Source information
Chemical mapping of a 207-nucleotide RNA with 2A3 and DMS. Conditions: 150 mM KOAc, 10 mM MgCl2 and 150 mM bicine (pH 8.5), 24 C. For DMS, 1,826 sequencing reads were counted. For 2A3, 647 sequencing reads were counted. Source: RMDB library M2RFOK, as collected in RNAgym. 2A3 adducts were read by reverse transcription with SuperScript II with manganese.
[RMDB]
RNA sequence: GGGAACGACUCGAGUAGAGUCGAAAAGCGGGGCUUGAAACGCGGGUAGCGCGCACGCCCGGCGAAGAAGUUCGCAUACACGGUGUGCUGGUGCCGAAGUGUCUGCUGCAACGGCACGCUCGACACCUAGAACAUACCGUAUUCGUACGGUAUGUAAUGGUGAUAGCAAGUUCGCUUGCUAUCACCAAAAAGAAACAACAACAACAAC
Reactivity to 2A3 in 0.01 (KOAc 150mM, MgCl2 10mM, bicine 150mM(pH8.5), 24C), signal-to-noise 2, nucleotides 027 to 156: g000c030g010g130g040g030c040u120u120g050a100a200a020c000g000c120g040g000g150u170a110g140c110g000c030g030c100a000c030g000c000c000c040g030g070c030g000a060a000g050a030a000g090u040u030c080g000c090a000u140a160c110a020c130g030g000u000g000u010g020c080u070g050g030u010g000c020c000g000a060a000g000u010g010u060c080u070g190c050u080g020c070a050a060c010g000g000c000a000c000g040c040u040c040g020a000c000a020c030c000u020a000g110a060a000c000a000u000a000c000c000g000u000a010u000u020c130g010u000a010c010g000g000u000a000u010g000u000a000a080
Reactivity to DMS in 0.01 (KOAc 150mM, MgCl2 10mM, bicine 150mM(pH8.5), 24C), signal-to-noise 1, nucleotides 027 to 156: g030c030g010g010g070g020c000u000u000g010a090a140a070c010g040c000g010g000g030u010a110g000c050g020c000g040c040a130c110g000c000c000c020g000g040c000g000a060a300g000a050a110g000u000u000c060g040c000a250u000a040c080a130c090g000g040u020g010u000g020c090u000g010g010u000g040c000c020g020a020a200g050u000g000u010c090u000g050c090u020g010c150a130a150c050g000g040c000a030c060g000c080u000c000g020a070c000a000c010c020u000a140g010a030a130c000a040u000a010c010c000g000u010a000u000u020c280g050u030a000c010g000g000u000a000u000g000u000a050a090